[RMDB]
RNA sequence: GGGAACGACUCGAGUAGAGUCGAAAAGGUUGGGGUCUGACUUAUCUGGGAGGCAGCCUGCACCCUCGGGGCCCCAGGGGGUGGGGCCCCAGCAGAUGUCUGGGAUUGGUAGCCAGGGCCUGGAGCCCUAGGGUGACGUUUUCGAACGUCACCCUAGAAAAGAAACAACAACAACAAC
Reactivity to DMS in 0.01 (KOAc 150mM, MgCl2 10mM, bicine 150mM(pH8.5), 24C), signal-to-noise 1, nucleotides 027 to 126: g020g000u010u030g000g010g010g000u000c050u000g020a020c040u010u010a040u020c070u020g000g020g000a060g000g000c010a050g020c120c060u020g000c040a150c060c100c040u040c160g000g000g000g000c000c000c000c030a060g000g000g000g010g010u010g020g010g000g050c000c000c000c000a010g010c020a030g010a070u000g010u020c000u040g010g000g000a060u030u000g020g000u040a060g020c040c030a030g010g000g010c010c010u020g000g000a110g010c010c040
Reactivity to 2A3 in 0.01 (KOAc 150mM, MgCl2 10mM, bicine 150mM(pH8.5), 24C), signal-to-noise 2, nucleotides 027 to 126: g170g010u110u120g000g020g040g070u040c070u050g060a020c050u090u140a060u230c030u060g020g070g080a030g010g000c000a010g020c020c000u020g000c030a120c000c040c000u050c030g000g000g030g000c000c000c000c000a010g040g010g000g000g080u030g010g010g000g030c000c000c000c000a000g000c020a020g000a050u030g050u010c000u050g040g020g020a060u020u110g010g010u010a030g000c000c040a060g000g000g010c010c000u090g030g050a010g040c000c000
The data come from the RNA Mapping Database (RMDB), library RFM100.
Chemical mapping of a 177-nucleotide RNA with DMS and 2A3.
Reactivities are given for positions 27 through 126.